[RMDB]
RNA sequence: GGGAACGACUCGAGUAGAGUCGAAAAGUGGUGGCCCGCCAGCGGGGGAUGCCAGGCCACCUCCCCCAGCGGCACGCAGCCCCUCUCUUAAUUAGAUCGGUUUUCCCCUGGUGUCCGGGAGAGCGGUAUGUGAGAAAUUAUUCGUAAUUUCUCACAUAAAAGAAACAACAACAACAAC
Reactivity to 2A3 in 0.01 (KOAc 150mM, MgCl2 10mM, bicine 150mM(pH8.5), 24C), signal-to-noise 9, nucleotides 027 to 126: g080u070g050g040u020g020g030c000c010c010g020c030c020a040g030c060g010g010g000g010g010a010u060g040c040c030a050g050g000c010c000a010c010c000u030c010c000c000c000c000a020g020c020g020g010c030a020c060g050c020a040g010c000c000c010c000u010c000u000c010u040u200a240a210u110u120a110g050a130u090c050g040g010u020u020u070u070c000c010c000c010u030g030g020u060g040u030c020c020g010g010g010a060g010a000g030c030g010g030u030
Reactivity to DMS in 0.01 (KOAc 150mM, MgCl2 10mM, bicine 150mM(pH8.5), 24C), signal-to-noise 7, nucleotides 027 to 126: g020u010g000g040u000g010g010c030c030c100g020c110c020a100g030c090g000g010g010g000g010a070u010g010c140c070a120g000g010c020c010a080c030c020u010c020c020c000c030c030a120g020c080g000g000c030a080c100g010c070a130g000c030c010c020c020u010c030u010c050u010u020a090a100u020u020a070g000a080u020c050g010g010u000u000u000u000c020c010c010c060u010g000g010u000g010u000c030c040g010g000g010a050g000a060g010c080g000g020u010